[RMDB]
RNA sequence: GGGAACGACUCGAGUAGAGUCGAAAACGUCCUAGUUUCGACUAGGACGAAAUAAAAUCAGCGGUAAAUAAUCGAGGCGUAUAACCGCUGAACGCCUCGAUAAAAUGCGAUGAUUCGUCAUCGCAAACUACUCAGCACUCUUCGGAGUGCUGAGUAGAAAAGAAACAACAACAACAAC
Reactivity to 2A3 in 0.01 (KOAc 150mM, MgCl2 10mM, bicine 150mM(pH8.5), 24C), signal-to-noise 1, nucleotides 027 to 126: c000g000u030c000c000u020a000g030u020u080u040c210g050a000c010u000a000g030g000a000c030g000a000a000a000u180a020a050a010a060u050c030a020g000c010g070g080u180a080a160a060u140a130a050u150c020g010a000g000g000c010g040u030a070u020a170a070c010c000g030c000u000g000a000a000c000g010c010c000u020c000g000a000u030a020a080a020a020u050g010c010g000a000u000g010a000u010u040c150g050u000c000a010u000c000g000c000a000a040a000